The record gives the reactivity of an RNA of 177 nucleotides to 2A3.
The reactions ran in a buffer of 150 mM KOAc, 10 mM MgCl2 and 150 mM bicine (pH 8.5), at 24 C.
For 2A3 the reverse transcriptase was SuperScript II with manganese.
The 2A3 profile rests on 500 reads.

[RMDB]
RNA sequence: GGGAACGACUCGAGUAGAGUCGAAAAGUAUACCGCCAGUAAAAUAGAUAGGCUUUAAUUUACCGAAUUUUAAAUGACUUGUUUUUAGUUUUAAAGAACUAUUAAAAAUAGCGGUUAAAAUCAAUAGCCAUUCUUACUGGUUCGCCAGUAAGAAUGGAAAAGAAACAACAACAACAAC
Reactivity to 2A3 in 0.01 (KOAc 150mM, MgCl2 10mM, bicine 150mM(pH8.5), 24C), signal-to-noise 1, nucleotides 027 to 126: g040u020a070u080a230c000c010g000c010c040a080g080u180a050a080a000a150u020a050g060a010u010a050g000g000c000u050u030u030a050a080u090u130u070a060c010c010g030a040a070u090u150u000u050a180a130a230u190g090a130c020u080u050g100u250u150u050u020u020a050g010u010u030u030u120a050a010a050g020a160a010c010u020a060u050u060a030a060a090a060a030u110a050g000c060g000g000u050u060a000a210a000a000u050c020a060a120u050a180g000